This 177-nucleotide RNA was probed chemically with DMS and 2A3. For 2A3, 747 sequencing reads were counted. For DMS, 1,013 sequencing reads were counted. For 2A3 the reverse transcriptase was SuperScript II with manganese. The data come from the RNA Mapping Database (RMDB), library OK2TRN.
[RMDB]
RNA sequence: GGGAACGACUCGAGUAGAGUCGAAAAAUUGGACAUCUCAAGGAAUCAGAUUGUGUGCCUUGCCAGACUUCCGGCUUGACAUAUAUCUCCUCUUACUGCCCGAAAGGAAUCAACAAUUGGUAUUGCAACCAACAUAGACGUUCGCGUCUAUGUUGGUAAAAGAAACAACAACAACAAC
Reactivity to DMS in 0.01 (KOAc 150mM, MgCl2 10mM, bicine 150mM(pH8.5), 24C), signal-to-noise 1, nucleotides 027 to 126: a120u000u000g000g010a120c050a050u000c030u000c080a120a080g000g030a050a060u000c070a090g010a060u000u000g040u010g020u010g000c010c000u010u000g020c030c030a110g010a130c080u000u010c040c010g020g000c050u030u000g010a080c060a070u010a100u000a090u010c040u000c030c000u000c030u000u000a080c080u000g000c020c000c000g020a060a050a040g000g030a060a080u000c040a000a080c080a060a050u010u000g010g000u000a120u000u000g030c130a060
Reactivity to 2A3 in 0.01 (KOAc 150mM, MgCl2 10mM, bicine 150mM(pH8.5), 24C), signal-to-noise 1, nucleotides 027 to 126: a000u120u120g040g010a000c000a060u010c020u010c120a020a020g090g040a100a060u190c040a070g070a090u060u070g040u020g000u000g060c000c000u030u040g020c010c010a070g110a180c100u140u000c050c020g000g030c000u010u040g000a000c060a030u130a000u020a020u080c050u000c000c000u050c010u000u110a060c000u080g030c040c030c040g030a080a090a000g180g060a040a020u120c030a040a050c030a050a120u120u140g040g030u100a110u060u180g080c000a010